[RMDB]
An RNA of 177 nucleotides, treated with DMS and 2A3 and read out base by base. For DMS, 3,116 sequencing reads were counted.
RNA sequence: GGGAACGACUCGAGUAGAGUCGAAAAUCAAAGAACGACCACGCAACUCCACGGACUUCAUCAUCGUCCACCGUGCCUGCUCCGCCUCGUUGGCGCGCUGCAACGUAGCAGAGUUGGUGAGCACGCGACUUAUCCCCGGAUUCGUCCGGGGAUAAGUAAAAGAAACAACAACAACAAC
Reactivity to DMS in 0.01 (KOAc 150mM, MgCl2 10mM, bicine 150mM(pH8.5), 24C), signal-to-noise 3, nucleotides 027 to 126: u020c100a070a080a120g020a110a090c100g010a140c040c020a050c050g020c050a080a070c060u020c030c070a060c080g010g000a040c050u000u000c070a080u020c080a060u000c110g010u000c030c040a140c120c020g020u010g000c000c060u000g000c000u010c030c020g000c020c010u000c070g030u000u000g000g020c060g000c140g000c060u000g010c010a020a050c040g010u000a080g020c050a050g000a060g020u000u000g010g010u000g010a120g000c000a010c020g020c080g010
Reactivity to 2A3 in 0.01 (KOAc 150mM, MgCl2 10mM, bicine 150mM(pH8.5), 24C), signal-to-noise 2, nucleotides 027 to 126: u090c050a020a030a030g040a090a030c070g060a030c030c000a020c030g120c020a040a050c020u010c020c000a050c090g050g030a030c010u040u010c060a120u020c020a020u070c060g080u020c000c010a020c030c000g020u020g030c030c000u020g000c000u010c020c010g030c010c000u020c020g130u050u080g200g120c060g000c020g000c030u080g000c020a040a070c050g080u050a020g040c060a000g020a000g050u030u040g050g030u030g030a000g010c050a000c030g020c030g090
Source: RMDB library OK2TST, as collected in RNAgym. The reactions ran in a buffer of 150 mM KOAc, 10 mM MgCl2 and 150 mM bicine (pH 8.5), at 24 C.